[RMDB]
RNA sequence: GGGAACGACUCGAGUAGAGUCGAAAAACGAAAACUACGCACUCGCAGCUUAAUAACCCGCGCUGAGCCCUUCUCCCCCAGCUUGCCUGUGUCCUAGGGAAUUGGAAGGUCAUCCUUCACAGGAUCGUCUAGGUAAUCCCUUUCGAGGGAUUACCAAUCUGAAGUAUGUGUUCGCACAUACUUCAGAAAAAGAAACAACAACAACAAC
Reactivity to 2A3 in 0.01 (KOAc 150mM, MgCl2 10mM, bicine 150mM(pH8.5), 24C), signal-to-noise 1, nucleotides 027 to 156: a000c050g020a020a010a000a060c110u180a000c060g040c060a080c010u090c040g040c020a040g000c020u140u130a110a060u060a080a200c000c030c000g000c010g010c080u090g060a050g020c060c000c040u090u080c040u070c070c000c000c000c010a000g000c040u000u100g020c020c000u000g000u000g000u030c030c000u040a060g000g080g000a060a060u120u090g050g010a030a020g020g010u060c060a080u060c000c010u000u060c000a020c000a080g000g000a010u060c010g010u030c080u010a020g000g000u000a000a000u000c000c010c000u000u060u030c140g030a000g010g020g010a000u000u000a000c000c000a020a000
Reactivity to DMS in 0.01 (KOAc 150mM, MgCl2 10mM, bicine 150mM(pH8.5), 24C), signal-to-noise 2, nucleotides 027 to 156: a090c050g000a080a030a080a080c020u000a050c020g030c060a130c060u000c020g000c030a120g020c010u010u010a030a120u000a100a100c020c040c010g030c070g030c010u000g000a140g010c030c010c030u000u000c010u000c020c010c000c020c030a140g000c030u000u000g010c010c030u010g030u000g000u000c040c030u000a070g000g040g000a090a110u000u000g010g010a090a050g040g020u000c050a100u010c030c010u000u000c100a100c120a040g050g000a030u010c100g030u000c050u010a100g020g010u010a000a010u000c000c000c010u000u000u000c240g010a040g020g010g000a010u000u000a010c000c000a010a040
This 207-nucleotide RNA was probed chemically with 2A3 and DMS. The reactions ran in a buffer of 150 mM KOAc, 10 mM MgCl2 and 150 mM bicine (pH 8.5), at 24 C. For 2A3, 853 sequencing reads were counted.